The record gives the reactivity of an RNA of 177 nucleotides to DMS.
For DMS, 919 sequencing reads were counted.
Conditions: 150 mM KOAc, 10 mM MgCl2 and 150 mM bicine (pH 8.5), 24 C.
DMS adducts were read by reverse transcription with MarathonRT.
Values cover nucleotides 27 to 126.
[RMDB]
RNA sequence: GGGAACGACUCGAGUAGAGUCGAAAAAUUAACCCAGCCUAAAUGAAGAGCAGGACAAAAGGUUCGUCUGCAAACACUCCAUGGUAGACAGAGGAUGGGGAAAUGGAUGUGCACUAUUUGGAAGUAAUAAAUUCACUUCGUUCGCGAAGUGAAUUUAAAAAGAAACAACAACAACAAC
Reactivity to DMS in 0.01 (KOAc 150mM, MgCl2 10mM, bicine 150mM(pH8.5), 24C), signal-to-noise 1, nucleotides 027 to 126: a030u020u000a100a150c020c000c030a120g000c040c050u010a020a050a070u000g010a080a060g000a200g000c030a010g000g010a060c080a080a080a090a100g000g000u010u020c080g010u010c020u010g010c020a030a050a050c060a060c030u000c050c020a020u010g000g030u000a110g000a050c070a040g030a050g010g010a070u010g000g000g000g000a060a100a020u000g010g010a050u000g030u000g030c040a040c070u000a060u010u010u000g000g010a070a070g000u000a100a080